[RMDB]
RNA sequence: GGGAACGACUCGAGUAGAGUCGAAAAAUUCUAGGGAUGGAGACAUCUUUCCAGGUCCUUCUGCAGUGCCUCAUCAUUCAUUUUGACCCAGGGACCAACAUUAAGAAGUUUCAGAAAAAUGGAUUGACACCUGCCUGGAAAAGACUUCAUGCCGUCACUUUUAAUCACCAUUCGUGGUGAUUAAAAGAAAAGAAACAACAACAACAAC
Reactivity to DMS in 0.01 (KOAc 150mM, MgCl2 10mM, bicine 150mM(pH8.5), 24C), signal-to-noise 1, nucleotides 027 to 156: a100u000u010c000u000a090g040g000g050a020u000g020g010a140g000a080c090a160u010c000u020u000u000c020c010a070g000g030u000c090c050u000u000c140u000g020c080a070g010u010g000c040c020u010c080a090u010c030a090u010u010c050a080u000u000u000u030g000a190c110c030c110a230g030g000g020a050c010c040a080a060c020a290u000u010a100a220g020a160a140g040u040u020u000c000a150g010a020a030a090a030a080u010g010g000a070u010u000g010a070c040a050c010c010u000g030c000c000u000g000g000a040a040a070a000g010a070c000u000u010c020a080u010g010c020c000g030u000c080a070
Reactivity to 2A3 in 0.01 (KOAc 150mM, MgCl2 10mM, bicine 150mM(pH8.5), 24C), signal-to-noise 2, nucleotides 027 to 156: a010u090u030c030u080a050g000g010g010a010u010g010g000a010g020a030c040a110u020c000u000u000u000c010c000a020g010g010u070c060c020u090u150c090u120g050c050a050g010u020g040c030c050u020c010a080u030c000a020u060u010c010a020u000u040u000u180g100a140c020c020c080a050g000g010g010a020c080c020a040a080c050a100u180u250a080a030g020a050a010g040u010u090u120c080a040g090a030a060a000a010a010u020g010g010a020u040u110g000a020c010a010c010c010u020g000c000c010u000g020g000a050a070a000a010g000a020c000u030u010c010a010u090g210c000c000g040u080c030a030

Chemical mapping of a 207-nucleotide RNA with DMS and 2A3.
Reactivities are given for positions 27 through 156.
For 2A3, 1,756 sequencing reads were counted.
As a SHAPE reagent, 2A3 marks flexible, mostly unpaired nucleotides at the ribose 2'-OH.
Conditions: 150 mM KOAc, 10 mM MgCl2 and 150 mM bicine (pH 8.5), 24 C.